The record gives the reactivity of an RNA of 177 nucleotides to 2A3 and DMS. For 2A3 the reverse transcriptase was SuperScript II with manganese. For 2A3, 3,678 sequencing reads were counted. The DMS profile rests on 1,114 reads. High DMS reactivity at an A or C suggests that its Watson-Crick edge is free. The RNA was probed in 150 mM KOAc, 10 mM MgCl2 and 150 mM bicine (pH 8.5) at 24 C.

[RMDB]
RNA sequence: GGGAACGACUCGAGUAGAGUCGAAAAGCCCGAUGGUUCGCCAUCGGGCAAAAGACUGAGAUCGCAACAGUCUAAAGGAGAACAAAACUCCAAAUGCGAUCAAAACCCCAAAGUUCGCUUUGGGGAAGUUCCUUAUUCUGUUCGCAGAAUAAGGAACAAAAGAAACAACAACAACAAC
Reactivity to 2A3 in 0.01 (KOAc 150mM, MgCl2 10mM, bicine 150mM(pH8.5), 24C), signal-to-noise 3, nucleotides 027 to 126: g000c030c000c000g020a010u010g030g050u040u090c220g050c090c010a010u000c010g000g010g020c000a010a020a010a030g000a010c010u010g010a010g010a090u000c010g000c030a050a130c010a170g000u000c010u010a100a090a010g050g000a000g010a190a040c060a160a180a060a010c000u000c000c010a000a060a050u010g000c000g020a000u010c020a010a100a060a090c000c000c000c000a000a010a010g010u030u100c200g030c110u000u000u000g000g000g000g000a000a010
Reactivity to DMS in 0.01 (KOAc 150mM, MgCl2 10mM, bicine 150mM(pH8.5), 24C), signal-to-noise 1, nucleotides 027 to 126: g030c000c010c010g010a050u000g000g010u000u010c220g040c000c000a000u010c000g030g000g020c010a000a000a100a100g020a020c000u000g010a090g000a060u000c010g030c000a050a150c000a000g000u020c010u000a110a080a040g010g000a040g000a150a180c130a080a050a090a090c030u000c000c000a050a040a170u000g000c000g000a000u010c040a050a120a110a030c030c000c000c000a000a000a010g010u000u040c220g030c000u000u000u000g010g000g010g010a000a010